[RMDB]
An RNA of 177 nucleotides, treated with 2A3 and DMS and read out base by base. DMS adducts were read by reverse transcription with MarathonRT.
RNA sequence: GGGAACGACUCGAGUAGAGUCGAAAAGCUGUUCGUCGAGGAUGAGAACAAGUUCAUCUUCUGCAAUGUCCUGGUGGGCCGCCAAGCCAAGGCUCGUUUCAAGAUCAGCAACGUGGGAAAGAUCACCCUAAAGCGAUAUAUUCGUAUAUCGCUUUAGAAAAGAAACAACAACAACAAC
Reactivity to 2A3 in 0.01 (KOAc 150mM, MgCl2 10mM, bicine 150mM(pH8.5), 24C), signal-to-noise 6, nucleotides 027 to 126: g020c020u010g040u090u070c050g030u030c020g050a010g030g000a020u030g010a030g040a160a100c160a230a040g060u050u020c000a020u000c000u040u000c010u020g000c020a030a100u080g030u040c010c010u040g040g030u060g020g030g010c020c010g000c030c050a070a020g020c020c020a040a030g030g000c020u010c040g030u050u040u070c060a070a020g010a080u030c010a010g030c020a020a030c060g060u090g020g030g050a040a110a040g080a060u080c040a080c020c020
Reactivity to DMS in 0.01 (KOAc 150mM, MgCl2 10mM, bicine 150mM(pH8.5), 24C), signal-to-noise 9, nucleotides 027 to 126: g010c040u000g010u000u000c070g020u010c200g010a040g020g010a030u000g000a040g010a100a130c260a090a150g010u010u000c020a020u000c010u000u000c010u010g010c070a070a080u000g000u000c020c020u010g010g020u000g010g010g010c030c040g000c070c060a070a190g000c070c070a060a090g010g010c030u000c070g000u000u000u000c080a080a090g010a050u000c030a050g010c040a050a080c130g010u000g020g000g000a070a070a080g000a080u000c070a090c090c070
Overview
DMS (dimethyl sulfate) methylates the pairing face of unpaired adenines and cytosines. The reactions ran in a buffer of 150 mM KOAc, 10 mM MgCl2 and 150 mM bicine (pH 8.5), at 24 C. The 2A3 profile rests on 13,321 reads.